[RMDB]
RNA sequence: GGGAACGACUCGAGUAGAGUCGAAAAAUACAAAAAGAAUAAAUGUCCUGCAGGUGAAUGGGGCUGUAGCAAUCUUAUUUAGGAUGAAAGUCUGAUUGGCCCUUAUUAGGAUGAUUAACCUUUCUGAUGAGGUACGAAUAUUCGUAUUCGUACCUCAAAAAGAAACAACAACAACAAC
Reactivity to DMS in 0.01 (KOAc 150mM, MgCl2 10mM, bicine 150mM(pH8.5), 24C), signal-to-noise 3, nucleotides 027 to 126: a070u070a130c130a090a040a080a090a090g010a170a080u020a040a050a090u010g020u000c020c020u000g010c180a050g010g010u010g000a030a060u010g000g000g000g000c030u010g010u020a040g010c130a080a040u020c030u000u010a070u020u000u020a060g010g020a060u000g000a080a080a060g020u010c020u000g000a070u000u000g000g000c000c010c040u000u010a020u010u010a040g000g010a050u000g010a090u020u000a100a060c130c080u000u000u010c020u000g000a280
Reactivity to 2A3 in 0.01 (KOAc 150mM, MgCl2 10mM, bicine 150mM(pH8.5), 24C), signal-to-noise 2, nucleotides 027 to 126: a000u130a140c250a160a060a010a000a000g230a040a060u290a100a120a030u080g000u000c000c000u130g040c100a020g120g010u100g020a180a050u040g000g000g010g000c060u040g060u000a000g030c080a080a000u000c000u020u100a080u300u290u140a300g200g100a000u180g060a040a040a000g000u000c010u020g050a130u090u130g000g000c010c000c000u000u100a160u080u080a000g010g000a000u000g060a000u210u200a000a100c000c060u000u000u000c000u000g040a040